An RNA of 177 nucleotides, treated with 2A3 and read out base by base. The RNA was probed in 150 mM KOAc, 10 mM MgCl2 and 150 mM bicine (pH 8.5) at 24 C.
[RMDB]
RNA sequence: GGGAACGACUCGAGUAGAGUCGAAAAAGUGUGAGUGGACGCGUGAGUGUGUGAGUGUGCGCGCUUGGAGCGUGUUAGGCGAGUGCGUGCGCCCACCCCUGCGCCCCUCCUCCCGCUUACACUUUGAAGCUAGCAGUGCAUUCGUGCACUGCUAGCUAAAAGAAACAACAACAACAAC
Reactivity to 2A3 in 0.01 (KOAc 150mM, MgCl2 10mM, bicine 150mM(pH8.5), 24C), signal-to-noise 2, nucleotides 027 to 126: a000g120u100g000u040g000a000g000u150g020g030a120c080g060c020g070u150g050a160g010u110g000u010g010u020g000a020g050u090g000u000g000c010g010c000g030c000u020u030g130g000a050g150c050g010u150g080u300u120a110g010g010c000g000a000g000u090g020c030g000u040g000c000g000c010c000c000a000c070c010c000c000u000g000c010g000c000c040c000c010u030c000c010u130c010c000c010g000c010u000u080a000c030a000c000u020u000u010g030a040